Overview
Structure probing data (2A3) for a 207-nucleotide construct. Source: RMDB library M2RFPK, as collected in RNAgym. The RNA was probed in 150 mM KOAc, 10 mM MgCl2 and 150 mM bicine (pH 8.5) at 24 C. Reactivities are rounded to 0.1 and cut off at 0 and 3.
RNA sequence: GGGAACGACUCGAGUAGAGUCGAAAACUGUCUCAGUGUUCAUCCCCUGAUCAAGGAUGCCCGAAACGGUGAGGCGGAAAGCAAAUUAAAUAACGUCAACCCAUCGCGACGGUUGGCCAGUUAAGAAAAAACCGGGGAGUCUUCGGACUCCCCGGAAGUAUUACAAAAACUUCGGUUUUUGUAAUACAAAAGAAACAACAACAACAAC
Reactivity to 2A3 in 0.01 (KOAc 150mM, MgCl2 10mM, bicine 150mM(pH8.5), 24C), signal-to-noise 2, nucleotides 027 to 156: c000u010g070u040c010u010c020a270g190u030g000u110u080c000a010u040c010c010c010c000u070g030a160u060c030a000a040g010g000a020u030g020c030c120c040g140a130a110a040c020g000g030u020g000a010g000g010c010g040g000a090a020a000g050c070a170a030a030u140u140a100a090a130u170a030a030c020g010u000c000a000a010c000c000c060a120u200c120g020c050g040a070c080g020g030u020u010g000g040c000c040a030g030u060u070a090a060g050a040a120a060a050a000a000c020c000g020g000g000g000a000g000u030c000u040u090c140g040g020a000c000u000c000c010c000c050g000g000a080a000